RNA sequence: GGGAACGACUCGAGUAGAGUCGAAAAGGAACUAAAAAAAUCUGGAAGAUUCUUCUCCCUCAUGUCUUGGGAAUUGAGGGAAUACUUUGUCAUAACGGAACAUCUGAUAAAGCAACAUUUCGUUCCGCUUCUGAUAAUGGUUCGCCAUUAUCAGAAGAAAAGAAACAACAACAACAAC
Reactivity to 2A3 in 0.01 (KOAc 150mM, MgCl2 10mM, bicine 150mM(pH8.5), 24C), signal-to-noise 3, nucleotides 027 to 126: g010g000a030a030c050u270a040a000a050a080a000a040a150u040c030u070g060g020a050a040g020a140u050u010c000u100u000c010u010c020c010c000u000c000a050u120g110u080c040u120u250g260g030g070a130a090u040u020g000a010g010g000g020a000a000u010a020c010u000u030u020g030u020c010a040u040a180a070c100g080g050a080a070c030a050u050c050u040g020a030u040a050a040a020g060c060a020a070c010a050u060u100u070c050g000u010u010c000c020g020
Reactivity to DMS in 0.01 (KOAc 150mM, MgCl2 10mM, bicine 150mM(pH8.5), 24C), signal-to-noise 4, nucleotides 027 to 126: g010g000a030a060c070u010a010a030a140a190a110a110a050u000c020u010g010g020a300a160g000a060u000u000c040u000u000c070u000c000c010c000u010c010a020u000g000u000c110u000u020g030g010g010a060a090u000u000g010a010g010g010g000a030a100u000a030c020u000u010u000g020u000c010a010u010a080a090c140g020g010a070a090c140a090u010c090u000g010a020u000a020a020a050g010c080a070a070c100a080u000u010u000c040g000u000u000c000c000g010